[RMDB]
RNA sequence: GGGAACGACUCGAGUAGAGUCGAAAACUUAGAACGUAAAAUUUCAGGCAAACUGGGAACAUGAGGUGGGGCAUAGCAAGCUGUUCUUCAACAAGUACCUGAGGUUGAUUCAACAGCAGAUAGUAUGAACUGAGGACAACUUCGGUUGUCCUCAGUUAAAAGAAACAACAACAACAAC
Reactivity to DMS in 0.01 (KOAc 150mM, MgCl2 10mM, bicine 150mM(pH8.5), 24C), signal-to-noise 1, nucleotides 027 to 126: c060u000u020a070g010a110a110c160g020u010a100a170a050a140u000u030u000c000a090g030g000c150a090a070a060c080u000g000g000g010a040a040c090a020u000g000a030g000g000u000g000g000g010g010c030a020u010a070g040c150a130a080g000c000u000g020u010u000c070u000u000c030a010a000c070a020a130g000u000a140c040c110u010g010a040g000g020u000u000g000a050u010u000c100a010a000c060a020g040c040a040g010a080u010a090g010u010a080u010g030